[RMDB]
RNA sequence: GGGAACGACUCGAGUAGAGUCGAAAAGAUGUUCGCUGAUGCGUCAGCCGCAUGCCCAGGUGGCCGCGAUCUUCAAGGCUACGGCGCGGAUAGGUCCGCGCUGAUCGUUUUCCUCCAACGACGCUAUAAAAGGAACGAAGGUUCGCCUUCGUUCCAAUCAUGCCAAUCACUUCGGUGAUUGGCAUGAAAAAGAAACAACAACAACAAC
Reactivity to 2A3 in 0.01 (KOAc 150mM, MgCl2 10mM, bicine 150mM(pH8.5), 24C), signal-to-noise 1, nucleotides 027 to 156: g070a010u060g020u050u150c070g010c060u040g040a020u020g020c120g180u010c010a000g010c010c000g020c000a010u130g010c000c010c010a000g010g010u010g000g000c000c010g060c050g040a000u000c000u030u000c000a040a020g010g000c000u020a020c000g000g000c000g010c020g020g030a060u180a250g210g160u060c000c000g040c010g030c020u020g000a060u000c000g020u000u050u160u040c050c000u110c040c030a110a110c120g130a060c040g000c140u060a080u070a160a120a130a130g010g000a000a000c010g010a000a030g010g020u050u080c170g110c010c000u000u000c000g000u000u020c000c010a000a000